[RMDB]
Conditions: 150 mM KOAc, 10 mM MgCl2 and 150 mM bicine (pH 8.5), 24 C.
An RNA of 177 nucleotides, treated with 2A3 and DMS and read out base by base.
In probing experiments dimethyl sulfate is read out at A N1 and C N3, which are open when not base-paired.
RNA sequence: GGGAACGACUCGAGUAGAGUCGAAAAGACGCCUGUGUGGCGAAGCGAGCAAUGGAAUAAGCCGCAAUAGAAGAUGAGAUGGAAGCGGCAAGAUAGAAUGCUCGCAACAAGAUCCAUCUCACAGAGACCUGCAUAGUAUCUUCGGAUACUAUGCAGGAAAAGAAACAACAACAACAAC
Reactivity to 2A3 in 0.01 (KOAc 150mM, MgCl2 10mM, bicine 150mM(pH8.5), 24C), signal-to-noise 4, nucleotides 027 to 126: g020a020c010g000c000c000u300g050u160g180u290g200g000c000g000a050a020g000c000g000a020g000c030a040a230u140g030g090a150a060u140a140a050g010c000c000g000c030a060a010u170a150g190a130a010g100a170u030g000a000g000a000u000g000g000a080a070g000c000g010g000c010a000a000g030a030u130a030g120a090a070u050g000c010u020c000g000c010a000a010c010a000a000g050a040u000c000c000a000u000c000u020c010a000c000a000g080a000g020a070
Reactivity to DMS in 0.01 (KOAc 150mM, MgCl2 10mM, bicine 150mM(pH8.5), 24C), signal-to-noise 2, nucleotides 027 to 126: g000a230c010g000c000c000u000g020u070g000u100g000g010c000g010a110a160g010c030g000a100g000c010a010a080u000g010g000a300a180u010a060a200g020c010c020g020c010a260a060u060a120g010a130a090g010a230u000g010a030g000a000u000g000g010a050a170g020c000g030g030c000a090a000g010a230u040a110g000a060a090u000g010c020u040c000g000c020a100a040c090a060a100g000a050u010c000c000a030u000c000u060c000a020c110a070g000a120g000a090